[RMDB]
RNA sequence: GGGAACGACUCGAGUAGAGUCGAAAAUUCAUGGAGACCCAUCCCACACUGGAUGCCCUACACUGUGACAUCGGCAAUGCCACUGAGUUUAACAAAAUAUUCCAAGAUGAGAUUGGGGAGGUGUCGCACGGACUAUUAGCUUCGGCUAAUAGUCCGUAAAAGAAACAACAACAACAAC
Reactivity to 2A3 in 0.01 (KOAc 150mM, MgCl2 10mM, bicine 150mM(pH8.5), 24C), signal-to-noise 3, nucleotides 027 to 126: u070u050c010a050u060g090g000a080g030a040c030c000c000a000u070c030c000c010a080c030a030c090u010g030g010a030u020g040c000c020c030u110a120c020a010c050u080g000u040g030a000c000a120u000c030g000g000c050a050a050u070g080c050c000a050c040u030g010a070g110u020u060u090a090a050c070a040a060a040a090u140a090u070u000c000c010a050a020g030a220u180g050a030g000a060u030u120g010g000g020g010a060g000g010u030g020u010c000g000c020
Reactivity to DMS in 0.01 (KOAc 150mM, MgCl2 10mM, bicine 150mM(pH8.5), 24C), signal-to-noise 2, nucleotides 027 to 126: u000u040c070a050u030g020g020a070g000a130c000c000c030a050u000c020c000c000a120c120a010c060u070g000g010a050u000g010c020c000c010u010a040c120a010c090u000g040u000g010a060c110a040u000c150g000g030c030a050a060u000g000c000c010a030c030u010g000a160g040u000u070u000a110a090c200a150a050a050a100u040a070u040u010c000c000a110a170g000a080u030g020a090g010a090u050u020g000g000g000g030a110g000g000u000g030u050c010g000c110